[RMDB]
An RNA of 177 nucleotides, treated with DMS and 2A3 and read out base by base. Values cover nucleotides 27 to 126. Values are in units of 0.01, from 0 to 300, in steps of 10. The data come from the RNA Mapping Database (RMDB), library OK2TST.
RNA sequence: GGGAACGACUCGAGUAGAGUCGAAAAAACUCCAGCAUAUCUUUGGGAAGCACCGGGAUGUACGGAAGCUGCCACGUGAAGGGAAAUAGCAACGCAGAGAUCACUUCAGCCACCAUUGCCACGUUUGGCUAUAUUGCGGGUUCGCCCGCAAUAUAGCAAAAGAAACAACAACAACAAC
Reactivity to DMS in 0.01 (KOAc 150mM, MgCl2 10mM, bicine 150mM(pH8.5), 24C), signal-to-noise 2, nucleotides 027 to 126: a070a030c070u010c010c030a140g060c050a090u010a070u000c030u000u000u010g030g010g020a110a130g050c100a140c050c020g010g020g010a130u010g000u000a080c090g020g000a080a060g000c060u010g010c030c020a080c110g000u000g010a070a010g010g000g000a010a050a090u000a110g040c050a010a090c180g020c080a040g010a070g000a070u010c010a030c090u000u000c050a110g050c100c000a060c050c020a040u010u010g010c030c020a000c130g000u000u020u000g010
Reactivity to 2A3 in 0.01 (KOAc 150mM, MgCl2 10mM, bicine 150mM(pH8.5), 24C), signal-to-noise 1, nucleotides 027 to 126: a000a000c040u020c030c000a020g050c050a090u090a030u170c030u070u100u070g040g000g040a020a070g030c070a060c020c030g020g060g040a120u030g060u110a040c020g020g010a030a000g060c050u040g020c030c000a040c060g050u010g100a070a020g070g040g000a020a080a000u140a020g070c020a010a060c050g030c060a020g020a010g020a100u120c010a000c150u100u030c010a040g070c000c060a050c020c000a010u070u080g020c010c060a040c020g060u000u010u080g000